[RMDB]
RNA sequence: GGGAACGACUCGAGUAGAGUCGAAAAGACCGUCAGCGCCAUCGGCCAGAGCAUGUUCGGCGCCACGGUGUAACCGGUGUCGUCGCGAUCACUGUUGAUCGCCUCCUCCACAGCGGUACUGAUCUCGUGACACGGUUCCACGACGUCGAUCACACCGACUGAUGUUAGUGUUCGCACUAACAUCAGUAAAAGAAACAACAACAACAAC
Reactivity to DMS in 0.01 (KOAc 150mM, MgCl2 10mM, bicine 150mM(pH8.5), 24C), signal-to-noise 2, nucleotides 027 to 156: g010a100c120c000g030u000c030a070g010c010g000c000c030a050u020c020g030g040c010c090a130g010a160g000c030a150u000g010u010u000c060g000g010c010g040c010c050a060c030g060g030u010g020u000a030a060c030c020g070g000u010g070u000c020g040u000c010g010c110g010a020u000c000a100c100u010g020u010u010g000a040u000c000g040c020c040u020c060c060u010c070c080a150c100a060g030c020g020g030u000a170c070u010g040a060u000c020u010c120g030u000g020a080c030a130c020g030g020u010u000c020c100a130c020g020a070c030g010u000c010g010a070u000c020a060c060a100c030c000g010
Reactivity to 2A3 in 0.01 (KOAc 150mM, MgCl2 10mM, bicine 150mM(pH8.5), 24C), signal-to-noise 5, nucleotides 027 to 156: g040a010c040c010g010u070c050a050g030c040g010c060c020a080u120c060g040g030c050c050a090g040a070g080c100a140u160g020u110u070c070g010g000c010g020c010c020a070c070g150g010u010g020u010a010a010c000c020g090g140u080g000u010c050g060u080c020g010c020g010a000u010c020a040c140u100g050u160u170g140a030u020c000g000c020c020u100c000c010u090c030c040a110c010a050g020c010g020g000u040a070c020u030g000a020u010c020u020c030g010u030g000a010c000a000c030g000g020u000u030c050c010a010c030g060a010c010g020u010c010g010a030u050c040a040c030a040c080c040g070
Structure probing data (DMS and 2A3) for a 207-nucleotide construct. 2A3 adducts were read by reverse transcription with SuperScript II with manganese. The RNA was probed in 150 mM KOAc, 10 mM MgCl2 and 150 mM bicine (pH 8.5) at 24 C. It was measured as part of the RMDB library OK3TST.